[RMDB]
The record gives the reactivity of an RNA of 177 nucleotides to 2A3 and DMS.
The 2A3 profile rests on 1,594 reads.
For 2A3 the reverse transcriptase was SuperScript II with manganese.
For DMS the reverse transcriptase was MarathonRT.
For DMS, 1,333 sequencing reads were counted.
RNA sequence: GGGAACGACUCGAGUAGAGUCGAAAAUCUUGGGGCAUUGCGGUAAUGCGCGUGGGCAGUGCUGCGUCGCACCACGCGACGGGACACGUAACAGGGUCACGGGGAGGGUAGGGUGGCGCUUGAACUCCGAUGACUAGCUGUUCGCAGCUAGUCAUCGAAAAGAAACAACAACAACAAC
Reactivity to 2A3 in 0.01 (KOAc 150mM, MgCl2 10mM, bicine 150mM(pH8.5), 24C), signal-to-noise 2, nucleotides 027 to 126: u070c050u010u100g000g000g030g020c080a100u100u070g050c000g100g030u100a030a050u190g030c000g000c040g050u030g030g030g000c110a060g010u030g070c030u110g040c020g090u090c020g000c010a060c060c000a040c120g020c010g050a010c000g020g020g070a040c070a000c050g070u090a090a020c010a130g070g000g080u070c060a020c110g060g000g020g030a190g010g000g010u160a080g010g030g030u110g030g000c070g000c000u040u040g030a050a010c040u000c080
Reactivity to DMS in 0.01 (KOAc 150mM, MgCl2 10mM, bicine 150mM(pH8.5), 24C), signal-to-noise 1, nucleotides 027 to 126: u030c140u010u000g030g000g000g000c030a080u010u000g010c070g000g000u000a170a130u020g000c000g000c040g030u060g000g040g000c280a140g010u040g000c070u000g010c010g030u100c040g000c000a060c170c110a090c080g000c000g000a100c100g060g000g020a170c000a130c190g000u000a060a180c070a300g000g000g000u010c190a130c150g000g000g000g040a140g020g030g000u070a070g040g010g010u020g000g000c080g020c000u010u010g000a030a050c070u010c100